[RMDB]
RNA sequence: GGGAACGACUCGAGUAGAGUCGAAAAUUAAAGCCAUUCGUGGCUUUAAACUCUGGUGUCCCGAAAAGGCUCGUGCGCGAUCGCACGCGAACCAGUUUUCGAUUAAGGAUAAGUUCGCUUAUCCUAACCUUCAGUUAAACUUCGGUUUAACUGAAGGAAAAGAAACAACAACAACAAC
Reactivity to 2A3 in 0.01 (KOAc 150mM, MgCl2 10mM, bicine 150mM(pH8.5), 24C), signal-to-noise 2, nucleotides 027 to 126: u010u000a000a000a000g010c010c000a010u030u090c270g090u040g000g010c010u000u000u020a020a010a010c050u020c040u080g010g020u090g020u070c040c000c010g010a070a080a000a020g050g020c010u000c040g000u020g000c000g020c090g180a220u300c060g000c020a000c000g020c010g000a020a020c000c000a030g010u000u010u080u110c090g020a100u180u100a050a000g000g000a010u000a000a000g010u030u050c150g050c090u000u000a000u030c000c000u010a010a020
Reactivity to DMS in 0.01 (KOAc 150mM, MgCl2 10mM, bicine 150mM(pH8.5), 24C), signal-to-noise 3, nucleotides 027 to 126: u000u010a000a010a010g000c000c000a040u000u010c190g020u000g010g020c000u000u000u000a000a040a090c150u010c070u010g000g010u000g000u000c010c010c000g010a040a050a090a140g000g010c030u000c010g020u000g020c030g030c170g020a140u010c140g000c000a010c000g010c020g000a040a060c010c000a120g010u010u000u000u000c040g000a130u000u000a110a050g000g000a000u000a000a000g000u000u010c240g010c010u000u000a010u000c000c000u000a060a090

The record gives the reactivity of an RNA of 177 nucleotides to 2A3 and DMS. For DMS the reverse transcriptase was MarathonRT. Conditions: 150 mM KOAc, 10 mM MgCl2 and 150 mM bicine (pH 8.5), 24 C. The data come from the RNA Mapping Database (RMDB), library M2PK50. For 2A3, 3,317 sequencing reads were counted.